This 177-nucleotide RNA was probed chemically with DMS and 2A3. The RNA was probed in 150 mM KOAc, 10 mM MgCl2 and 150 mM bicine (pH 8.5) at 24 C. For 2A3, 3,345 sequencing reads were counted. It was measured as part of the RMDB library TTRDES.
RNA sequence: GGGAACGACUCGAGUAGAGUCGAAAAGAUAUGGAGAUGCCCGACUUUUGACGGCUUCACGUCGGAAACGACGUGAGCCGAUAAGUCGGCAUCUCCUAAGUCAAAUCAUAGUCUUCGGACUAUGAAAUCUUUCUUUAACGUUCGCGUUAAAGAAAGAAAAAGAAACAACAACAACAAC
Reactivity to DMS in 0.01 (KOAc 150mM, MgCl2 10mM, bicine 150mM(pH8.5), 24C), signal-to-noise 2, nucleotides 027 to 126: g000a040u000a300u000g000g010a000g020a020u000g010c180c040c040g010a030c000u000u000u000u010g000a260c110g010g010c010u010u000c010a000c010g010u000c000g010g000a140a060a250c000g000a000c000g020u000g000a040g010c000c000g020a020u000a010a020g010u010c020g000g020c000a000u000c000u000c000c000u000a000a080g000u000c040a140a090a260u000c000a010u010a000g020u000c000u000u010c290g050g020a000c010u000a000u000g000a010a090a140
Reactivity to 2A3 in 0.01 (KOAc 150mM, MgCl2 10mM, bicine 150mM(pH8.5), 24C), signal-to-noise 3, nucleotides 027 to 126: g000a030u060a050u140g020g000a040g020a010u020g020c160c190c070g030a010c020u200u220u140u300g300a150c020g030g010c100u300u300c060a030c010g020u030c020g000g020a090a090a020c010g000a000c000g020u000g010a000g020c000c010g000a010u030a000a000g000u020c000g000g030c000a000u020c010u000c000c000u000a010a000g000u010c030a000a020a090u020c000a020u000a010g010u000c000u020u090c300g110g020a020c000u000a000u000g000a060a030a010
Overview
Reactivities are given for positions 27 through 126. The DMS profile rests on 2,419 reads. For DMS the reverse transcriptase was MarathonRT.